[RMDB]
RNA sequence: GGGAACGACUCGAGUAGAGUCGAAAACAACCUUGUACCAGGCAGCCCGACCCUGACCUAAAGUAAAUUCCUAGGAGAACUGUUUUCCUGGGUUUUGAAUUUGCAGUAACAGGUGUGAACAUUCUAGCUUAUAGCAGCAGUUCGCUGCUGCUAUAAGAAAAGAAACAACAACAACAAC
Reactivity to DMS in 0.01 (KOAc 150mM, MgCl2 10mM, bicine 150mM(pH8.5), 24C), signal-to-noise 2, nucleotides 027 to 126: c150a110a160c040c020u000u010g030u010a050c110c090a060g010g030c040a050g010c030c020c040g000a170c080c070c050u000g010a110c060c020u010a060a030a090g000u010a100a020a020u000u000c000c000u000a010g010g010a020g010a030a280c220u000g010u010u000u000u000c000c000u000g030g010g010u000u000u000u010g010a060a190u000u010u000g000c100a070g020u000a060a060c060a040g010g010u010g020u000g000a010a080c170a090u010u000c050u000a080g010

This 177-nucleotide RNA was probed chemically with DMS. The reactions ran in a buffer of 150 mM KOAc, 10 mM MgCl2 and 150 mM bicine (pH 8.5), at 24 C. Values cover nucleotides 27 to 126.